Source: RMDB library OK1LIB, as collected in RNAgym.
Structure probing data (2A3 and DMS) for a 177-nucleotide construct.
Conditions: 150 mM KOAc, 10 mM MgCl2 and 150 mM bicine (pH 8.5), 24 C.

RNA sequence: GGGAACGACUCGAGUAGAGUCGAAAACGGGCGUAUAAGUUGAGAUACUUAGAGCGCGCUGUUCGCUGCGCCUAGGUGUUAUCCCUAGGGUGUUAGGCAGUGGAACUGUGACAGCCGUAAGGGAUGAGCGCCUUUCUAGCUUCGGUUGGAAAGGCGCAAAAGAAACAACAACAACAAC
Reactivity to 2A3 in 0.01 (KOAc 150mM, MgCl2 10mM, bicine 150mM(pH8.5), 24C), signal-to-noise 7, nucleotides 027 to 126: c020g020g130g000c060g000u180a130u060a300a070g020u030u050g120a090g000a140u150a120c000u000u010a000g000a030g030c010g000c010g000c030u060g100u140u090c100g010c060u140g000c010g050c000c000u000a010g020g000u040g050u110u130a070u070c000c000c000u010a010g020g030g040u050g080u080u050a150g080g000c000a010g010u090g120g140a100a090c010u020g000u020g040a020c010a010g040c000c010g050u050a040a050g010g010g010a030u020g030a010
Reactivity to DMS in 0.01 (KOAc 150mM, MgCl2 10mM, bicine 150mM(pH8.5), 24C), signal-to-noise 1, nucleotides 027 to 126: c020g000g000g000c300g000u080a220u040a120a160g000u000u000g000a300g000a300u070a000c000u000u020a040g010a130g020c000g010c030g000c040u020g000u010u020c060g010c000u020g020c010g000c000c000u000a000g000g000u010g010u050u010a060u050c120c010c000u000a030g010g000g050u010g020u010u000a100g020g020c010a040g000u000g040g000a010a150c000u000g000u000g010a040c050a060g000c010c000g010u030a080a040g020g010g010a020u010g000a110